Conditions: 150 mM KOAc, 10 mM MgCl2 and 150 mM bicine (pH 8.5), 24 C.
This 177-nucleotide RNA was probed chemically with 2A3 and DMS.
For DMS, 878 sequencing reads were counted.
Reactivities are given for positions 27 through 126.

[RMDB]
RNA sequence: GGGAACGACUCGAGUAGAGUCGAAAACGCUCGGCCACUGGCACGGGAAAGUCAGCGCUCGGGACCGAUGCUCUCACGAGACUCUUGCGCCAUUCAGUCGCACCCCGUGGAAGAAUGUGGGUGUUUGACGAGUAUGACCGUUCGCGGUCAUACUCGUAAAAGAAACAACAACAACAAC
Reactivity to 2A3 in 0.01 (KOAc 150mM, MgCl2 10mM, bicine 150mM(pH8.5), 24C), signal-to-noise 2, nucleotides 027 to 126: c030g020c040u010c010g070g000c000c040a060c060u100g000g030c030a030c060g010g020g030a020a030a030g030u060c010a010g020c010g010c100u040c040g010g000g040a050c030c010g050a060u110g020c030u020c000u000c020a030c030g030a020g020a050c030u020c020u130u050g000c030g010c030c010a080u160u140c070a000g090u110c010g000c000a020c000c020c000c000g040u080g030g030a160a050g080a090a090u080g030u210g020g010g040u050g000u060u080u140g080
Reactivity to DMS in 0.01 (KOAc 150mM, MgCl2 10mM, bicine 150mM(pH8.5), 24C), signal-to-noise 1, nucleotides 027 to 126: c120g010c040u000c000g030g000c030c020a110c090u000g010g010c010a060c110g020g020g000a140a100a100g000u000c050a040g060c080g050c040u000c090g000g030g000a130c000c140g040a030u010g000c050u000c060u000c010a080c110g010a160g000a030c060u000c050u000u000g020c070g030c060c020a100u000u000c120a160g000u010c070g020c020a080c080c000c000c000g000u000g010g010a140a120g010a080a040u000g000u010g010g020g000u010g000u000u000u000g010
2A3 adducts were read by reverse transcription with SuperScript II with manganese.